[RMDB]
RNA sequence: GGGAACGACUCGAGUAGAGUCGAAAAAAACCACCCCAGUGAAUUCAUAACAGGAGAUAACUUGCUUAAGACCUGACUGUUUUUAAAAGCGAAUGCCAGUGAGUGAAAUGCCAGCUCCCUGUACAGUAUCGAGCUAUAAAUUCGUUUAUAGCUCGAUAAAAGAAACAACAACAACAAC
Reactivity to DMS in 0.01 (KOAc 150mM, MgCl2 10mM, bicine 150mM(pH8.5), 24C), signal-to-noise 3, nucleotides 027 to 126: a040a030a050c040c010a070c050c030c000c010a110g010u020g020a150a050u010u010c070a090u060a110a070c100a060g000g000a060g000a050u000a090a080c050u010u020g000c060u000u000a040a070g000a100c120c000u010g010a110c060u010g000u000u010u000u020u000a020a090a060a080g030c060g000a060a050u010g010c070c020a020g000u010g000a050g020u000g020a040a100a050u010g000c040c040a070g010c050u000c030c000c000u000g010u010a060c160a090g010u010
Reactivity to 2A3 in 0.01 (KOAc 150mM, MgCl2 10mM, bicine 150mM(pH8.5), 24C), signal-to-noise 5, nucleotides 027 to 126: a000a010a020c020c000a020c000c000c000c000a020g030u030g180a100a160u150u150c050a050u100a180a080c020a050g010g050a060g020a090u060a080a080c030u030u040g030c000u100u090a070a010g040a060c000c010u020g070a060c030u020g130u030u010u000u050u190a130a180a020a000g020c020g030a050a020u100g060c030c010a020g030u020g060a040g010u040g050a090a080a050u060g020c010c010a000g010c010u010c010c000c010u020g010u090a100c020a040g010u020
Structure probing data (DMS and 2A3) for a 177-nucleotide construct. The reactions ran in a buffer of 150 mM KOAc, 10 mM MgCl2 and 150 mM bicine (pH 8.5), at 24 C. It was measured as part of the RMDB libraries RFM100 and RFMREP.